The record gives the reactivity of an RNA of 177 nucleotides to 2A3 and DMS. The reactions ran in a buffer of 150 mM KOAc, 10 mM MgCl2 and 150 mM bicine (pH 8.5), at 24 C. It was measured as part of the RMDB library TTRDEL. The DMS profile rests on 3,427 reads. For 2A3 the reverse transcriptase was SuperScript II with manganese.

RNA sequence: GGGAACGACUCGAGUAGAGUCGAAAAGAUAUGGACCUAGUGUGAGUCCAACAGCUCGGAAACGAGACAUGGACCCACUCAGGUCCUAAGUCAAACUACCCCUGUUCGUUCGCGAACAGGGGUAGAAGUACAGGAGUUAGUUCGCUAACUCCUGUACAAAAGAAACAACAACAACAAC
Reactivity to 2A3 in 0.01 (KOAc 150mM, MgCl2 10mM, bicine 150mM(pH8.5), 24C), signal-to-noise 3, nucleotides 027 to 126: g020a010u060a050u150g000g010a000c000c010u030a190g000u010g020u020g080a150g010u030c010c000a010a050c060a050g020c010u000c000g020g030a090a070a060c010g020a010g020a010c000a020u070g010g000a000c000c000c000a020c010u030c070a010g030g000u000c000c000u000a010a000g000u000c010a010a070a100c000u010a000c000c000c000c000u000g010u000u000c030g020u020u060c300g000c030g260a000a000c010a000g020g000g020g000u000a000g000a010a000
Reactivity to DMS in 0.01 (KOAc 150mM, MgCl2 10mM, bicine 150mM(pH8.5), 24C), signal-to-noise 4, nucleotides 027 to 126: g000a070u010a300u010g000g000a010c010c000u000a070g020u000g010u010g030a090g000u010c000c000a040a060c240a200g010c010u000c000g000g010a130a070a180c020g000a000g020a020c110a190u000g000g000a000c000c010c010a010c020u000c090a030g010g010u000c000c000u010a000a060g020u000c030a110a120a220c020u010a010c010c000c000c020u010g010u010u000c000g010u010u010c250g010c010g010a020a000c000a000g000g010g000g020u000a000g000a010a110